Overview:
An RNA of 177 nucleotides, treated with DMS and 2A3 and read out base by base. For 2A3 the reverse transcriptase was SuperScript II with manganese. Conditions: 150 mM KOAc, 10 mM MgCl2 and 150 mM bicine (pH 8.5), 24 C.
RNA sequence: GGGAACGACUCGAGUAGAGUCGAAAAGAGAGAAAUACCGCGCGCAAUCCGAGAAAGGACUGUAAGGACGCGGAAGCAGAAUCGUCCUUCCACGCAAGAAAGAGCGAAAAUAGACGCAUAGAGAGAGCAUACCACCGCUGUUCGCAGCGGUGGUAUGAAAAGAAACAACAACAACAAC
Reactivity to DMS in 0.01 (KOAc 150mM, MgCl2 10mM, bicine 150mM(pH8.5), 24C), signal-to-noise 2, nucleotides 027 to 126: g000a090g000a210g000a030a040a100u000a080c000c040g000c010g030c000g010c030a050a070u110c030c010g000a170g080a080a140a230g020g000a020c040u010g000u000a030a170g030g010a060c010g020c100g000g050a090a050g000c190a070g010a120a100u010c000g010u000c010c010u000u010c060c000a100c060g000c050a020a060g000a130a080a030g020a050g040c000g000a040a020a110a030u070a070g000a130c000g020c090a050u050a030g000a050g000a100g020a100g000
Reactivity to 2A3 in 0.01 (KOAc 150mM, MgCl2 10mM, bicine 150mM(pH8.5), 24C), signal-to-noise 2, nucleotides 027 to 126: g080a000g030a000g010a010a120a020u100a100c010c020g000c010g000c000g040c010a000a050u040c000c010g010a030g140a150a090a030g020g000a000c000u060g040u070a080a140g150g000a020c020g020c010g010g020a000a000g000c020a010g060a110a060u030c010g010u000c000c000u020u000c010c010a080c050g020c000a000a130g060a150a040a000g070a040g010c000g000a060a080a010a000u160a020g010a070c020g000c060a020u110a030g100a000g010a000g000a000g060